[RMDB]
RNA sequence: GGGAACGACUCGAGUAGAGUCGAAAAGAUCAGUUUCACUUGUGAGGGAUUCGUGCUGCGUUGGCCUCAUAAUUUAUGGCUCUACGGACGUGAGUGUAACAUCACGGCUAGAACUCAUAAAGGUGGAUCUCUGCCCACGAUUCGUCGUGGGCGGGGGAAAAGAAACAACAACAACAAC
Reactivity to DMS in 0.01 (KOAc 150mM, MgCl2 10mM, bicine 150mM(pH8.5), 24C), signal-to-noise 9, nucleotides 027 to 126: g010a090u020c090a080g010u010u010u010c020a050c040u020u020g010u010g010a050g000g010g000a160u010u010c030g020u010g010c090u020g010c050g020u010u010g010g010c010c020u000c040a030u020a070a100u010u000u010a010u000g010g000c030u000c010u010a020c230g010g010a090c030g000u000g000a020g010u020g010u040a100a100c150a070u000c000a010c010g000g000c020u000a020g000a030a030c020u020c010a010u000a000a020a050g000g010u010g010g000a070
Reactivity to 2A3 in 0.01 (KOAc 150mM, MgCl2 10mM, bicine 150mM(pH8.5), 24C), signal-to-noise 9, nucleotides 027 to 126: g060a100u150c070a030g040u020u040u060c040a030c040u060u050g030u030g050a040g020g040g050a100u080u080c030g020u080g080c080u090g020c040g050u080u070g070g080c000c000u030c030a040u090a090a040u030u050u050a060u060g010g000c010u000c010u030a040c110g030g090a020c020g020u010g020a030g020u160g080u120a050a040c030a090u020c000a000c000g000g000c000u020a020g000a030a020c030u020c200a010u050a030a050a020g060g020u050g030g060a080